Chemical mapping of a 207-nucleotide RNA with 2A3. The 2A3 profile rests on 1,220 reads.

RNA sequence: GGGAACGACUCGAGUAGAGUCGAAAACGGCAAAAAACCAAACUUGACCACCAAGGAUAAAAGAGAUCUUAUCCAAGGAUGCAAAAGAUAAUCUCACUUUUGACACCCACUGAUCUCGAACUUAAAGAAAACCGAGACUACUUCGGUAGUCUCGGAACACUAAGUUCUCCUUCGGGAGAACUUAGUGAAAAGAAACAACAACAACAAC
Reactivity to 2A3 in 0.01 (KOAc 150mM, MgCl2 10mM, bicine 150mM(pH8.5), 24C), signal-to-noise 2, nucleotides 027 to 156: c030g030g000c070a000a040a050a030a030a030c090c030a120a010a060c040u090u090g080a120c030c030a010c020c000a060a050g040g030a050u040a070a070a020a010g000a000g010a000u000c010u050u060a030u070c070c030a050a050g050g000a040u040g000c000a000a010a010a000g030a040u110a130a180u100c060u080c080a030c010u020u020u020u010g070a100c010a030c020c020c000a060c110u060g010a010u020c010u030c010g010a070a040c040u110u150a180a040a000g110a030a070a040a020c000c010g000a000g010a000c000u000a010c000u010u060c100g050g000u000a000g000u000c000u000c000g000g000a000a000
For 2A3 the reverse transcriptase was SuperScript II with manganese.